[RMDB]
An RNA of 177 nucleotides, treated with 2A3 and DMS and read out base by base. The RNA was probed in 150 mM KOAc, 10 mM MgCl2 and 150 mM bicine (pH 8.5) at 24 C. For DMS the reverse transcriptase was MarathonRT.
RNA sequence: GGGAACGACUCGAGUAGAGUCGAAAAGCCAAGUCGCCACAAGACAGGGCGACGACACGAUUUACGAGACGGCACCCUACGCCGAUUUCGAUAUCGAGGCUCGGGGUGUGGCGGUGGACGAGACCUCCACUACCGCCAGGUUCGCCUGGCGGUAGUGAAAAGAAACAACAACAACAAC
Reactivity to 2A3 in 0.01 (KOAc 150mM, MgCl2 10mM, bicine 150mM(pH8.5), 24C), signal-to-noise 2, nucleotides 027 to 126: g040c000c010a010a040g040u010c000g060c040c000a140c030a180a090g170a170c050a200g070g010g010c000g020a020c010g000a000c020a000c050g090a050u030u060u300a130c040g010a050g030a040c020g000g010c010a080c050c020c040u060a020c070g010c020c010g110a130u020u040u070c060g040a050u010a030u160c040g050a080g090g020c040u060c070g020g010g000g000u070g000u010g090g020c050g000g000u050g000g040a020c020g020a010g030a050c020c000u060c020
Reactivity to DMS in 0.01 (KOAc 150mM, MgCl2 10mM, bicine 150mM(pH8.5), 24C), signal-to-noise 3, nucleotides 027 to 126: g010c010c030a100a140g030u000c010g020c010c020a050c130a120a140g020a110c280a160g000g010g020c010g020a010c010g010a100c200a090c060g000a070u000u010u000a110c050g000a090g000a070c010g000g040c000a090c050c080c060u010a150c170g020c000c000g010a100u010u000u000c150g020a170u010a030u000c010g000a140g000g000c020u000c150g000g020g010g020u000g000u000g000g010c050g000g020u010g000g010a090c070g000a100g010a050c020c020u010c060